[RMDB]
RNA sequence: GGGAACGACUCGAGUAGAGUCGAAAAGUCCACCGCAUAUGCGGUUGCAGGUGGCCCGCCUGUCCGUUUGCAGCGUCUGGGCCACCGAGAGAGCACGCGAUGGGCGGAGGGAUCGCAGCUCCACCUGACAUUAGUGGAGCUUCGGCUCCACUAAUGUAAAAGAAACAACAACAACAAC
Reactivity to DMS in 0.01 (KOAc 150mM, MgCl2 10mM, bicine 150mM(pH8.5), 24C), signal-to-noise 1, nucleotides 027 to 126: g020u010c030c020a150c080c040g000c010a200u010a100u010g000c040g020g010u010u020g010c030a040g000g000u000g000g020c010c000c010g000c010c000u010g010u000c040c060g010u000u000u000g000c020a010g010c090g010u000c060u010g010g000g000c010c000a010c000c000g000a040g000a090g000a070g010c010a030c070g030c010g000a010u000g000g010g020c010g010g000a020g000g000g000a010u000c020g010c020a060g010c020u000c010c020a080c070c030u000g010
Source information: This 177-nucleotide RNA was probed chemically with DMS. DMS adducts were read by reverse transcription with MarathonRT. The reactions ran in a buffer of 150 mM KOAc, 10 mM MgCl2 and 150 mM bicine (pH 8.5), at 24 C.